[RMDB]
RNA sequence: GGGAACGACUCGAGUAGAGUCGAAAAAAAAAGGGCUUCUGCCGUGAGUGGCACACGUAGGGCAAAUCGCUUGCUCUACGUGCGGAAUCGACAUCAAGAGAUUUCGGAAGCAUAAUUUUUGCACCGCCAUCUAGUUUCAGUUCGCUGAAACUAGAUGAAAAGAAACAACAACAACAAC
Reactivity to 2A3 in 0.01 (KOAc 150mM, MgCl2 10mM, bicine 150mM(pH8.5), 24C), signal-to-noise 2, nucleotides 027 to 126: a000a020a000a000a090g090g010g000c010u000u000c000u010g010c010c030g030u080g080a110g090u300g030g000c000a000c000a000c000g000u010a000g000g020g000c000a000a020a050u280c160g020c200u020u010g000c000u000c000u000a000c010g000u000g000c000g000g000a000a000u000c010g050a060c050a130u180c020a040a060g060a000g000a080u010u010u010c000g000g000a000a020g000c000a000u020a010a010u010u010u010u010u020g030c030a030c030c010g010c020
Reactivity to DMS in 0.01 (KOAc 150mM, MgCl2 10mM, bicine 150mM(pH8.5), 24C), signal-to-noise 3, nucleotides 027 to 126: a000a000a000a040a110g020g000g010c000u000u000c010u000g010c000c020g010u030g020a160g030u010g000g010c020a020c000a010c000g020u000a000g020g010g000c000a000a020a240u010c210g000c240u000u000g000c000u000c000u000a000c010g000u000g000c010g010g010a010a000u000c010g010a160c190a160u010c230a070a060g010a300g000a020u000u000u000c000g010g000a010a000g020c000a020u000a030a040u000u000u000u000u010g000c150a150c050c000g020c210
An RNA of 177 nucleotides, treated with 2A3 and DMS and read out base by base.
The reactions ran in a buffer of 150 mM KOAc, 10 mM MgCl2 and 150 mM bicine (pH 8.5), at 24 C.
It was measured as part of the RMDB library RFMREP.
The DMS profile rests on 2,605 reads.